[RMDB]
RNA sequence: GGGAACGACUCGAGUAGAGUCGAAAAGCUACGUGGAGACACGUAGCAGGAGACUUCGGUCUCCGAUCGCUGCAACUGGUGCGCAGCGCAUGCGAGGCGUCUGUGGUCGGCGAGCCCACUGACGCGAAAGCUCGCAUGCGAAGAAAUGGCAUUAGAAAAAUGCAGUCCUAUUCGUAGGACUGCAUUUAAAAGAAACAACAACAACAAC
Reactivity to 2A3 in 0.01 (KOAc 150mM, MgCl2 10mM, bicine 150mM(pH8.5), 24C), signal-to-noise 2, nucleotides 027 to 156: g000c000u010a010c000g000u000g020g010a060g000a030c000a000c000g000u000a000g000c000a000g000g000a000g000a000c050u080u120c290g090g000u010c000u000c000c000g010a080u090c050g000c050u040g000c000a130a190c110u040g020g000u010g000c050g030c030a020g020c010g010c010a000u000g000c000g000a000g030g010c000g000u000c010u040g000u010g000g010u040c010g060g140c190g080a060g030c010c000c000a000c020u000g000a010c000g000c020g050a100a070a010g090c000u000c000g000c000a000u000g010c000g020a040a000g050a010a050a010u110g010g000c010a000u030u020a020g000a120a130
Reactivity to DMS in 0.01 (KOAc 150mM, MgCl2 10mM, bicine 150mM(pH8.5), 24C), signal-to-noise 1, nucleotides 027 to 156: g000c000u000a000c000g040u010g000g030a300g000a300c000a030c000g020u000a020g060c000a020g000g030a070g000a020c010u000u000c300g110g000u010c000u000c000c000g010a020u000c030g000c000u000g010c030a090a180c000u000g000g020u000g000c040g000c020a080g000c020g010c020a020u000g040c000g030a060g090g020c010g010u000c010u020g000u000g030g010u000c020g000g010c070g050a120g020c150c000c000a020c000u000g000a040c020g000c020g000a020a050a130g020c010u010c000g020c020a030u000g000c020g010a080a120g000a060a110a150u020g000g000c000a030u000u000a070g020a090a180

The record gives the reactivity of an RNA of 207 nucleotides to 2A3 and DMS.
For DMS, 2,715 sequencing reads were counted.
For 2A3, 1,641 sequencing reads were counted.
2A3 is a SHAPE reagent: it acylates the 2'-hydroxyl of flexible nucleotides of all four kinds.